[RMDB]
RNA sequence: GGGAACGACUCGAGUAGAGUCGAAAAUGGAUAUGAUCACAAAAGCCUUGAUAGGAAUUCAUGUGAAGAGUUCCUCAGACUGUUACCUAGGUGUAAAAAAAACACUGCAGUUUCACAUGAAGAUGAUGGUCAGUUGCUCAUCCUCAAGCCUUCCUCCUAGUUUUAAAUAUUUCGAUAUUUAAAACUAAAAAGAAACAACAACAACAAC
Reactivity to 2A3 in 0.01 (KOAc 150mM, MgCl2 10mM, bicine 150mM(pH8.5), 24C), signal-to-noise 3, nucleotides 027 to 156: u130g020g010a060u100a060u140g030a020u030c020a000c020a090a250a040a100g020c030c050u130u160g090a130u190a140g070g010a080a110u020u000c020a020u030g000u030g020a060a110g050a010g070u080u100c010c040u030c020a030g020a070c010u010g020u090u080a100c050c080u090a100g060g000u020g030u070a140a020a050a010a000a000a050a010c010a000c010u040g000c010a020g010u000u040u010c020a020c000a020u020g010a000a020g030a050u180g010a040u020g030g010u020c020a030g040u090u060g030c020u020c080a070u070c010c020u040c020a040a070g070c000c010u010u020c020c000u010c040c010
Reactivity to DMS in 0.01 (KOAc 150mM, MgCl2 10mM, bicine 150mM(pH8.5), 24C), signal-to-noise 2, nucleotides 027 to 156: u010g010g000a170u010a060u000g020a060u000c030a060c030a140a200a180a210g000c010c000u000u000g040a140u000a060g030g070a180a110u000u000c010a040u000g040u000g000a070a130g000a160g000u000u000c040c060u000c080a120g050a080c050u000g020u000u010a040c080c080u000a210g030g020u000g030u000a010a000a000a040a070a060a060a060c030a020c040u000g020c130a050g020u000u010u000c020a020c000a040u000g000a030a020g010a100u000g020a060u000g000g030u000c020a180g020u000u000g010c000u000c030a120u000c040c000u020c050a060a120g010c040c050u000u000c010c000u000c020c040